[RMDB]
An RNA of 177 nucleotides, treated with 2A3 and DMS and read out base by base. For DMS the reverse transcriptase was MarathonRT. Reactivities are given for positions 27 through 126. For 2A3 the reverse transcriptase was SuperScript II with manganese. The reactions ran in a buffer of 150 mM KOAc, 10 mM MgCl2 and 150 mM bicine (pH 8.5), at 24 C.
RNA sequence: GGGAACGACUCGAGUAGAGUCGAAAAGAUAUGGACUCUUUACAGGGAGAACGUCGGAAACGACUGUUCGACGAUCUGUAUGGAGUCCUAAGUCAAAGAAAUGCUUUUGUUCGCAAAAGCAUUUCAACUAAUAGAGAACCUUCGGGUUCUCUAUUAGAAAAGAAACAACAACAACAAC
Reactivity to 2A3 in 0.01 (KOAc 150mM, MgCl2 10mM, bicine 150mM(pH8.5), 24C), signal-to-noise 1, nucleotides 027 to 126: g030a000u070a060u130g000g010a000c000u000c000u010u010u000a010c020a010g010g010g020a050g000a010a000c000g020u000c000g020g020a040a020a020c010g030a010c090u300g010u000u010c010g060a080c040g050a080u040c000u020g010u000a010u020g010g020a010g000u000c000c010u000a010a010g000u000c020a010a030a140g000a010a000a000u000g000c000u040u010u020u000g030u070u070c240g000c180a000a010a000a000g000c010a010u000u030u000c000a000a000
Reactivity to DMS in 0.01 (KOAc 150mM, MgCl2 10mM, bicine 150mM(pH8.5), 24C), signal-to-noise 3, nucleotides 027 to 126: g000a020u000a300u010g000g000a000c000u000c000u010u000u000a010c010a020g020g030g010a130g000a020a010c000g000u000c000g000g000a080a080a160c000g010a000c000u010g030u000u000c000g010a070c190g010a040u010c000u000g000u000a000u000g000g000a010g020u000c000c000u000a010a050g010u000c050a080a120a150g000a000a000a000u000g010c000u000u000u000u000g020u000u020c230g010c000a000a000a020a010g000c000a010u000u000u000c000a090a210